The record gives the reactivity of an RNA of 207 nucleotides to 2A3 and DMS. Values cover nucleotides 27 to 156. DMS adducts were read by reverse transcription with MarathonRT. The DMS profile rests on 2,149 reads. For 2A3, 1,322 sequencing reads were counted. Source: RMDB library OK3TST, as collected in RNAgym.
[RMDB]
RNA sequence: GGGAACGACUCGAGUAGAGUCGAAAAACUGCAAGCCUUCGCCACCGACUGGUGACCGAGUGGCAAGCAAAACAGCGCGCCGUCACACCGCGAAGUAGCCUAAGUGGAGGUGAGGUCAUUGGGCCCAUCUUGGCACCUGAGAGCGACAGUGACUCCAAAAAGUGAAGUAGUUCGCUACUUCACUUUUAAAAGAAACAACAACAACAAC
Reactivity to 2A3 in 0.01 (KOAc 150mM, MgCl2 10mM, bicine 150mM(pH8.5), 24C), signal-to-noise 2, nucleotides 027 to 156: a000c080u060g020c040a130a030g020c000c010u040u040c040g060c000c010a010c010c030g260a190c110u290g010g030u040g050a050c030c000g020a050g090u060g020g000c000a030a020g000c000a020a040a020a000c070a050g020c040g000c010g040c020c050g000u020c000a020c000a000c050c000g010c000g030a030a070g030u080a020g000c010c040u100a040a060g040u040g060g060a020g030g050u010g000a140g040g000u010c050a120u070u260g110g000g000c010c020c000a020u000c020u040u080g020g030c000a010c050c030u120g040a020g010a020g050c020g030a020c020a050g050u030g040a000c010u050c110c000a040
Reactivity to DMS in 0.01 (KOAc 150mM, MgCl2 10mM, bicine 150mM(pH8.5), 24C), signal-to-noise 2, nucleotides 027 to 156: a100c060u000g020c010a080a300g000c020c030u030u000c000g020c000c020a020c040c010g030a220c140u020g030g030u010g020a050c160c080g020a130g050u000g000g030c000a130a180g080c010a040a060a120a090c080a080g010c040g020c120g040c080c030g000u000c080a130c020a180c060c030g010c020g020a120a130g010u010a100g060c040c070u000a060a100g020u000g020g020a080g020g000u000g020a170g010g020u000c070a200u010u000g000g020g010c030c030c020a040u000c040u020u000g000g010c020a030c020c010u040g000a060g000a060g000c030g000a070c050a100g000u000g030a130c010u000c010c040a080